[RMDB]
RNA sequence: GGGAACGACUCGAGUAGAGUCGAAAAUUUAUGCACUCAGCCACCGAUAAGACACUCACAUUCCUCAUGCCCUAGAACCAGAAACACGGCGUCACUCUCGCACGUGCGCGGGUGGAUGCACACGGCAUCUUAUACUGUGGUUCGCCACAGUAUAAGAAAAAGAAACAACAACAACAAC
Reactivity to DMS in 0.01 (KOAc 150mM, MgCl2 10mM, bicine 150mM(pH8.5), 24C), signal-to-noise 9, nucleotides 027 to 126: u000u000u010a070u010g020c060a070c060u010c050a080g020c020c030a060c030c040g010a090u000a070a090g010a080c080a080c040u000c070a050c070a100u000u000c020c000u000c070a080u010g000c020c020c030u000a080g010a070a100c050c050a070g010a090a080a060c090a070c120g010g000c010g000u010c030a040c040u000c030u010c020g020c000a150c280g020u010g020c030g030c100g010g000g010u000g010g010a050u000g010c020a060c080a130c100g000g010c090a110
Reactivity to 2A3 in 0.01 (KOAc 150mM, MgCl2 10mM, bicine 150mM(pH8.5), 24C), signal-to-noise 6, nucleotides 027 to 126: u050u040u030a110u120g020c030a020c030u060c010a010g030c020c000a040c020c020g030a040u030a130a050g060a010c030a020c060u060c020a040c010a090u040u070c010c000u030c020a040u080g040c000c010c010u050a060g030a070a040c010c010a020g100a050a090a000c060a020c070g030g020c010g010u030c010a030c030u020c000u010c010g030c020a100c170g220u240g050c010g000c020g020g010g010u030g050g050a040u060g000c030a020c010a000c070g050g000c000a010